[RMDB]
RNA sequence: GGGAACGACUCGAGUAGAGUCGAAAAGUCUCAAUUUGUUCUGCAUUAAUGCCACAGUGGGGAUGGAGGCCAGGCCGUGGCCAGAGCAGAUACGUAGGCCCAUGAAAUUGAUGAACUGAGAGUUGCUUUCGCUUUCGUUAUUCGUAACGAAAGCGAAAAAAGAAACAACAACAACAAC
Reactivity to 2A3 in 0.01 (KOAc 150mM, MgCl2 10mM, bicine 150mM(pH8.5), 24C), signal-to-noise 1, nucleotides 027 to 126: g060u020c000u000c000a000a130u070u020u020g080u040u060c010u000g000c000a100u210u000a230a000u150g000c000c000a010c000a000g060u070g100g000g000g030a000u070g110g100a150g020g160c000c000a000g040g040c010c030g000u000g070g060c050c040a000g000a000g000c000a000g050a010u100a050c000g000u010a000g000g000c000c000c000a030u000g260a160a010a000u270u030g000a060u000g100a090a230c280u070g000a000g000a000g300u020u020g030c090u000

Structure probing data (2A3) for a 177-nucleotide construct. Source: RMDB library RFM100, as collected in RNAgym. For 2A3 the reverse transcriptase was SuperScript II with manganese. Conditions: 150 mM KOAc, 10 mM MgCl2 and 150 mM bicine (pH 8.5), 24 C. For 2A3, 376 sequencing reads were counted. Reactivities are given for positions 27 through 126.